[RMDB]
This 207-nucleotide RNA was probed chemically with 2A3.
RNA sequence: GGGAACGACUCGAGUAGAGUCGAAAAAUUUGGGAACAGCCAAGCUAAAGUAAAAUGGGGUCCCUUUAGGUCAUUUACAACCCUUAGUGUUGGGGUACAGAAUGCUGCUUUCUCUUGGCCUUUGCUGGAAGACCACUUCUAUGUUUUCUAAGAGGGAAGGUGACGAUUAAUUCGUUAAUCGUCACCUAAAAGAAACAACAACAACAAC
Reactivity to 2A3 in 0.01 (KOAc 150mM, MgCl2 10mM, bicine 150mM(pH8.5), 24C), signal-to-noise 1, nucleotides 027 to 156: a000u170u110u030g000g000g000a140a030c040a040g090c040c000a030a000g010c000u070a090a020a030g070u070a110a130a060a160u100g020g000g010g010u090c000c000c000u050u000u040a040g000g000u060c010a030u030u100u130a070c040a050a060c010c000c010u000u040a170g040u080g120u170u080g030g000g050g000u000a030c000a050g070a070a020u030g020c050u000g000c000u080u020u020c050u040c000u050u070g040g000c040c000u070u070u140g090c020u000g010g010a070a000g010a050c000c100a050c070u010u050c020u090a090u180g050u030u010u040u040c000u030a080a010g040a020g080g040g040a000
Conditions: 150 mM KOAc, 10 mM MgCl2 and 150 mM bicine (pH 8.5), 24 C. Values cover nucleotides 27 to 156.